[RMDB]
This 177-nucleotide RNA was probed chemically with DMS and 2A3.
Source: RMDB library OK1LIB, as collected in RNAgym.
The RNA was probed in 150 mM KOAc, 10 mM MgCl2 and 150 mM bicine (pH 8.5) at 24 C.
RNA sequence: GGGAACGACUCGAGUAGAGUCGAAAACUCGGUGUCCUGGAUGGCCUGGAUGCCUGUGCUCAGGGAGUUGGCCGAACUGGCGGCAUUGGUGGCGAUGCCAUAGAUCACAGAUACAUCACUCUCGGCCCUACCCCGUACUGUUCGCAGUACGGGGUAGAAAAGAAACAACAACAACAAC
Reactivity to DMS in 0.01 (KOAc 150mM, MgCl2 10mM, bicine 150mM(pH8.5), 24C), signal-to-noise 3, nucleotides 027 to 126: c010u000c040g000g020u000g000u000c000c020u020g000g020a160u030g000g000c020c020u010g000g010a030u010g010c040c010u010g020u020g000c060u060c070a150g000g000g000a100g000u000u000g010g010c010c010g020a090a120c060u030g010g010c070g000g020c050a040u000u000g010g030u000g020g000c030g000a070u000g020c010c010a130u020a030g000a080u000c060a050c070a070g010a070u010a090c160a070u010c070a070c070u000c070u000c020g000g000c010c020
Reactivity to 2A3 in 0.01 (KOAc 150mM, MgCl2 10mM, bicine 150mM(pH8.5), 24C), signal-to-noise 7, nucleotides 027 to 126: c030u030c030g010g010u050g010u050c010c010u050g090g030a140u190g190g210c010c010u020g020g010a020u020g010c000c010u060g020u080g040c060u060c110a070g010g050g000a050g000u080u050g050g000c010c000g030a090a060c070u080g070g010c030g030g000c040a030u030u120g120g010u140g080g010c050g040a030u070g020c010c010a030u100a050g110a040u120c050a020c020a140g060a030u110a100c020a050u050c010a030c040u040c010u000c000g030g000c000c030